[RMDB]
RNA sequence: GGGAACGACUCGAGUAGAGUCGAAAACUUUGUUGCAGAAGGAACGGAAGCUGUACGCCUCAUGAUGCAAAAGUGCGAGCACAGACCGAUCAGUGAUUCGUGUGGAAUGAACGAAUCUGGUGGGAUGCCUACGAGAGGCUUUCGAGCCUCUCGUAGGAAAAGAAACAACAACAACAAC
Reactivity to DMS in 0.01 (KOAc 150mM, MgCl2 10mM, bicine 150mM(pH8.5), 24C), signal-to-noise 2, nucleotides 027 to 126: c060u010u000u020g000u020u000g010c100a030g020a140a080g000g030a080a030c050g000g020a130a090g010c030u000g000u000a090c200g000c020c010u020c080a090u030g030a110u020g020c120a030a030a160a120g010u000g000c100g000a100g030c060a090c030a010g020a210c020c040g010a030u010c010a070g030u000g020a130u000u000c030g030u000g000u020g070g030a110a210u020g000a080a010c030g000a030a000u000c000u000g030g020u000g000g020g000a180u020g020